[RMDB]
RNA sequence: GGGAACGACUCGAGUAGAGUCGAAAAUCCUAAGUCUGUGUAAACUCCCAUGGAGGGUGACGGUAGCUAUCGGAAACGAUAGCUAUAAUCGUCACCUACCCACCCAUGGGAGGAAGAAGCAGAUAUGGAAAAAGCAUAUUCGUUCGCGAAUAUGCAAGCAUACACUUUUCUUCGGAAAAGUGUAUGCAAAAGAAACAACAACAACAAC
Reactivity to 2A3 in 0.01 (KOAc 150mM, MgCl2 10mM, bicine 150mM(pH8.5), 24C), signal-to-noise 2, nucleotides 027 to 156: u030c010c000u020a050a000g010u010c000u010g040u000g000u040a000a000a010c000u000c010c000c000a000u000g000g000a010g000g000g000u000g000a000c000g020g010u000a000g000c000u010a000u000c000g040g030a100a060a040c010g000a000u000a000g010c000u000a000u000a000a020u030c000g000u010c010a000c010c000u010a000c010c010c010a060c010c000c000a000u000g000g000g000a000g000g000a000a020g000a000a000g000c000a000g020a000u020a060u050g000g060a100a080a040a020a000g000c000a000u010a010u010u010c020g040u050u170c300g010c010g120a000a000u010a000u010g000c010a000a010
Reactivity to DMS in 0.01 (KOAc 150mM, MgCl2 10mM, bicine 150mM(pH8.5), 24C), signal-to-noise 1, nucleotides 027 to 156: u010c000c000u000a070a300g070u000c000u020g000u070g010u020a000a220a300c000u000c000c070c000a020u020g000g040a210g030g000g040u050g000a050c000g060g000u000a000g000c000u000a000u000c000g020g000a270a090a120c030g030a000u000a000g000c020u000a000u000a120a100u000c000g010u000c000a100c000c000u000a000c070c070c050a300c110c000c020a000u020g020g020g000a000g020g030a000a020g000a070a300g000c000a010g050a020u000a240u000g000g010a110a030a030a160a190g020c000a000u000a050u000u000c000g070u000u000c300g050c000g110a020a020u000a000u020g000c000a020a070

An RNA of 207 nucleotides, treated with 2A3 and DMS and read out base by base.
Conditions: 150 mM KOAc, 10 mM MgCl2 and 150 mM bicine (pH 8.5), 24 C.
Values cover nucleotides 27 to 156.
High DMS reactivity at an A or C suggests that its Watson-Crick edge is free.